[RMDB]
RNA sequence: GGGAACGACUCGAGUAGAGUCGAAAAUCGGUUCUUCUUCGAUCCGGACCGGCUCAUCUCGGCAAGAGGCGGCAGUCCUCAGUGCUCUUACUCUUUCCUAUAAAGAGGAGACUGCUGGACUCGCCGCAUACUCAACGCUUCGGCGUUGAGAAAAGAAACAACAACAACAAC
Reactivity to DMS in 0.01 (KOAc 150mM, MgCl2 10mM, bicine 150mM(pH8.5), 24C), signal-to-noise 5, nucleotides 027 to 129: u050c040g010g020u000u010c030u080u040c060u100u030c160g030a050u030c050c000g020g030a030c060c000g010g050c030u010c020a070u030c020u000c020g020g020c060a060a080g050a210g060g010c040g010g070c050a020g020u020c000c000u000c000a040g000u110g090c050u020c020u020u090a300c090u020c010u030u060u010c220c170u050a100u120a030a040a030g010a020g040g020a010g000a060c000u030g050c110u050g000g020a000c000u010c090g040c000c000g000c000a030u040a050
Reactivity to 2A3 in 0.01 (KOAc 150mM, MgCl2 10mM, bicine 150mM(pH8.5), 24C), signal-to-noise 6, nucleotides 027 to 129: u060c010g010g000u030u000c020u190u030c020u130u130c130g030a040u010c000c000g000g030a020c030c000g000g000c000u000c000a170u010c010u000c000g010g010c060a080a080g040a040g150g000c010g000g000c000a000g000u000c000c010u000c000a010g010u080g230c020u000c000u040u220a270c000u000c000u010u060u070c060c090u140a160u250a230a020a010g000a000g000g030a000g010a000c000u010g050c090u010g010g000a010c020u000c030g010c000c000g000c000a010u010a010

This 170-nucleotide RNA was probed chemically with DMS and 2A3. The reactions ran in a buffer of 150 mM KOAc, 10 mM MgCl2 and 150 mM bicine (pH 8.5), at 24 C. In probing experiments dimethyl sulfate is read out at A N1 and C N3, which are open when not base-paired. The DMS profile rests on 10,795 reads. Reactivities are given for positions 27 through 129.